[RMDB]
RNA sequence: GGGAACGACUCGAGUAGAGUCGAAAAGACGCUGAUGCGAUCGACUGUAAGAUAGAUAAAUUGAGAAGACAGAUACGUACGGCAAGUAUCGUCGCCAGAAUUACAGUCGCAAAUUGCCGUACGAAGAGCCGUAUGGCUACUUCGGUAGCCAUACGGCAAAAGAAACAACAACAACAAC
Reactivity to 2A3 in 0.01 (KOAc 150mM, MgCl2 10mM, bicine 150mM(pH8.5), 24C), signal-to-noise 3, nucleotides 027 to 126: g090a020c000g000c010u130g040a130u240g060c050g010a100u100c020g000a020c000u000g000u020a060a000g000a210u260a030g050a030u270a150a140a110u200u160g090a150g010a200a010g000a000c100a040g050a060u040a040c030g020u020a000c000g020g000c010a000a060g010u020a010u080c020g020u000c030g050c070c010a080g090a050a010u070u000a010c000a000g050u030c020g000c060a110a090a020u010u010g000c000c000g000u000a020c010g030a060a070g010a000
Reactivity to DMS in 0.01 (KOAc 150mM, MgCl2 10mM, bicine 150mM(pH8.5), 24C), signal-to-noise 2, nucleotides 027 to 126: g000a110c120g020c040u000g000a080u000g120c070g000a140u000c010g000a040c000u010g000u010a000a000g050a060u000a040g070a200u040a060a030a110u030u110g000a140g110a130a100g000a010c010a090g020a090u000a030c000g000u020a010c040g000g000c010a060a020g000u010a000u040c080g020u020c020g020c160c010a040g000a110a120u040u000a010c010a010g000u020c000g030c200a000a000a110u000u000g000c080c010g000u000a110c180g010a000a050g010a180